[RMDB]
RNA sequence: GGGAACGACUCGAGUAGAGUCGAAAAUAUAGGCGUUAUACUUUACAGCAACAGUACGCCGCUAACGCAAUUGCUACCUCUGGCAUAACAAGUAUAUCGGGUAAGGGUUUCUGUUCCGCACACGCAGCAUAUGAACACUGUUCGCAGUGUUCAUAUGAAAAGAAACAACAACAACAAC
Reactivity to DMS in 0.01 (KOAc 150mM, MgCl2 10mM, bicine 150mM(pH8.5), 24C), signal-to-noise 6, nucleotides 027 to 126: u010a080u000a080g020g010c070g020u010u000a080u010a040c050u000u010u010a110c140a070g000c090a060a060c120a080g020u000a050c060g010c020c050g010c130u000a060a080c140g000c070a090a070u000u010g000c030u000a060c080c040u000c070u010g000g000c030a040u010a070a070c100a050a170g000u010a050u000a040u000c040g010g010g000u010a040a070g000g010g000u000u000u000c060u000g000u000u000c020c030g000c060a050c120a050c110g010c070a090g020
Reactivity to 2A3 in 0.01 (KOAc 150mM, MgCl2 10mM, bicine 150mM(pH8.5), 24C), signal-to-noise 4, nucleotides 027 to 126: u200a020u070a060g030g000c010g010u060u060a080u030a160c030u110u110u090a080c060a060g040c020a030a010c000a050g030u050a020c030g020c040c000g000c020u030a060a000c030g030c060a060a170u070u070g000c000u040a050c010c030u030c040u020g020g000c040a040u060a120a020c020a070a060g050u040a110u010a010u250c030g030g000g030u040a050a050g070g050g000u010u080u030c020u020g040u060u050c050c010g030c020a030c010a000c090g050c010a030g010

This 177-nucleotide RNA was probed chemically with DMS and 2A3. It was measured as part of the RMDB library RFMREP. 2A3 is a SHAPE reagent: it acylates the 2'-hydroxyl of flexible nucleotides of all four kinds. For 2A3 the reverse transcriptase was SuperScript II with manganese. The RNA was probed in 150 mM KOAc, 10 mM MgCl2 and 150 mM bicine (pH 8.5) at 24 C. Reactivities are given for positions 27 through 126. For 2A3, 5,542 sequencing reads were counted.